This 177-nucleotide RNA was probed chemically with DMS and 2A3. The RNA was probed in 150 mM KOAc, 10 mM MgCl2 and 150 mM bicine (pH 8.5) at 24 C.
[RMDB]
RNA sequence: GGGAACGACUCGAGUAGAGUCGAAAAGAUCGUCGAUCGCUAGCGUAGCUAGACGACAUGUACUAGGAUCCGUACUCAUGUGAUCGUACAUGUAGCUAGUCCAUGGAGGAUCCUAGGUGGAUCGCGCGAUGCCCUUGGAAUUCGUUCCAAGGGCAUCAAAAGAAACAACAACAACAAC
Reactivity to DMS in 0.01 (KOAc 150mM, MgCl2 10mM, bicine 150mM(pH8.5), 24C), signal-to-noise 4, nucleotides 027 to 126: g000a070u010c010g010u000c040g050a120u010c080g050c010u000a020g010c050g020u000a070g000c010u000a040g000a110c030g000a090c130a100u020g000u000a090c010u000a030g010g000a000u000c010c010g000u020a120c150u000c030a010u010g010u020g010a020u000c190g010u000a030c120a050u010g010u000a060g030c110u010a090g000u000c030c020a030u000g000g000a220g000g020a030u000c000c000u000a000g000g000u010g000g000a040u000c010g010c170g020c230
Reactivity to 2A3 in 0.01 (KOAc 150mM, MgCl2 10mM, bicine 150mM(pH8.5), 24C), signal-to-noise 5, nucleotides 027 to 126: g020a050u050c020g130u020c040g060a140u040c050g010c040u010a000g040c040g300u160a040g000c040u010a020g110a180c030g040a020c030a040u210g030u020a040c000u000a000g000g030a000u000c010c020g050u120a090c060u090c130a010u050g140u220g070a100u130c080g070u130a040c030a110u190g040u140a040g020c030u030a020g040u010c010c010a030u040g030g010a040g010g000a020u000c050c000u000a000g000g020u040g080g020a020u030c020g010c040g010c040